[RMDB]
RNA sequence: GGGAACGACUCGAGUAGAGUCGAAAAGCCGACUGCACGUGCGUGCGAGCAGUUUUCGAAAUCGCACGUUUCACGUUAAGACCCAACUCUACUCGAUGCGAGGGUCAGCAAGCAAGCAGCAAUAAAACUUUACUCCUACCUUCGGGUAGGAGUAAAGAAAAGAAACAACAACAACAAC
Reactivity to DMS in 0.01 (KOAc 150mM, MgCl2 10mM, bicine 150mM(pH8.5), 24C), signal-to-noise 2, nucleotides 027 to 126: g020c060c060g020a140c040u020g010c140a060c000g040u000g030c030g030u020g000c000g010a010g000c230a150g010u010u000u020u030c110g000a050a100a120u000c010g000c000a000c000g010u000u000u010c030a040c020g010u000u000a110a090g010a100c000c020c020a140a060c020u000c010u000a010c000u010c000g010a020u000g000c030g000a130g020g020g010u010c010a140g000c040a050a060g010c040a060a060g000c060a040g000c070a090a040u020a070a060a080a130
Reactivity to 2A3 in 0.01 (KOAc 150mM, MgCl2 10mM, bicine 150mM(pH8.5), 24C), signal-to-noise 1, nucleotides 027 to 126: g070c060c010g110a150c030u080g040c000a000c000g040u020g000c000g000u010g000c000g020a080g010c050a040g040u070u070u190u250c060g100a100a090a130u040c010g030c000a000c010g000u010u080u070c030a010c010g010u010u040a050a010g020a030c030c010c010a040a030c000u020c000u010a030c020u000c000g000a040u090g000c040g040a160g000g040g000u020c020a000g000c000a070a000g010c010a070a000g000c030a010g000c000a050a040u070a200a080a020a000